[RMDB]
RNA sequence: GGGAACGACUCGAGUAGAGUCGAAAAGAUGUAUGAAGAACCGCUUUUUAGUCAAAUCAUUGAUAAAAUUGAAUCAGGCUGCAAUGACAGAGAAAUCUACACCAGUUUGCAUUGUUCUGCUAAAACUUUUAGGAAGUGGCGAGAUGACAAUAUAAAGUGUAAGCGAGAUAUUCGUAUCUCGCUUACAAAAAGAAACAACAACAACAAC
Reactivity to 2A3 in 0.01 (KOAc 150mM, MgCl2 10mM, bicine 150mM(pH8.5), 24C), signal-to-noise 2, nucleotides 027 to 156: g070a040u060g020u100a130u150g020a090a040g070a090a030c050c040g010c100u020u070u010u030u040a020g050u030c020a020a020a210u110c080a100u070u100g070a030u270a110a170a140a140u120u100g080a040a050u060c030a010g060g020c020u010g010c030a000a070u040g020a040c020a020g080a000g000a050a090a050u050c030u020a020c020a040c000c040a020g030u010u100u000g020c000a020u000u070g020u050u080c020u060g000c000u050a090a060a040a090c010u030u140u150u080a050g020g100a030a060g000u020g010g000c020g010a050g000a040u080g050a010c050a070a030u250a010u250a090a020a190g000
Reactivity to DMS in 0.01 (KOAc 150mM, MgCl2 10mM, bicine 150mM(pH8.5), 24C), signal-to-noise 1, nucleotides 027 to 156: g010a100u010g020u020a070u000g020a050a100g000a110a120c040c020g020c030u000u010u010u010u050a120g030u000c020a070a060a190u020c060a130u000u000g050a110u000a020a050a060a190u020u000g000a090a120u000c030a120g020g040c000u000g020c030a040a120u000g000a150c020a110g000a110g020a090a100a090u000c030u030a050c030a050c010c030a140g020u000u000u000g020c020a080u000u000g000u000u000c020u000g020c010u000a030a080a110a060c070u000u000u010u010a070g000g000a080a090g050u000g040g000c000g000a090g030a150u000g010a050c070a050a020u010a040u010a010a080a170g010
Structure probing data (2A3 and DMS) for a 207-nucleotide construct. The DMS profile rests on 2,148 reads. As a SHAPE reagent, 2A3 marks flexible, mostly unpaired nucleotides at the ribose 2'-OH. The RNA was probed in 150 mM KOAc, 10 mM MgCl2 and 150 mM bicine (pH 8.5) at 24 C.